Conditions: 150 mM KOAc, 10 mM MgCl2 and 150 mM bicine (pH 8.5), 24 C.
The record gives the reactivity of an RNA of 177 nucleotides to DMS.
The DMS profile rests on 813 reads.
Values cover nucleotides 27 to 126.
The data come from the RNA Mapping Database (RMDB), library OK2TST.

RNA sequence: GGGAACGACUCGAGUAGAGUCGAAAAAAGCCCCGCCUGGCUGGUAAUAAUGUCACGCGGACGUAAAAACGGAAUGGGGCACAGCACUGCGCCUGGCGUCCCGUCGCGACGAGGCAAGAUUUGCGGCACCUAUCAAACCCUUCGGGGUUUGAUAGGUAAAAGAAACAACAACAACAAC
Reactivity to DMS in 0.01 (KOAc 150mM, MgCl2 10mM, bicine 150mM(pH8.5), 24C), signal-to-noise 1, nucleotides 027 to 126: a100a070g010c070c020c000c130g000c120c010u020g000g030c000u000g020g040u000a080a060u030a140a030u000g010u010c010a080c150g010c020g030g000a090c050g030u020a060a070a050a110a080c050g000g000a070a090u040g010g000g020g020c010a010c070a020g000c050a050c160u020g020c210g030c070c010u020g030g000c110g010u000c040c020c020g010u000c010g000c030g020a080c030g020a110g000g000c040a060a090g000a120u000u010u000g020c000g010g000c040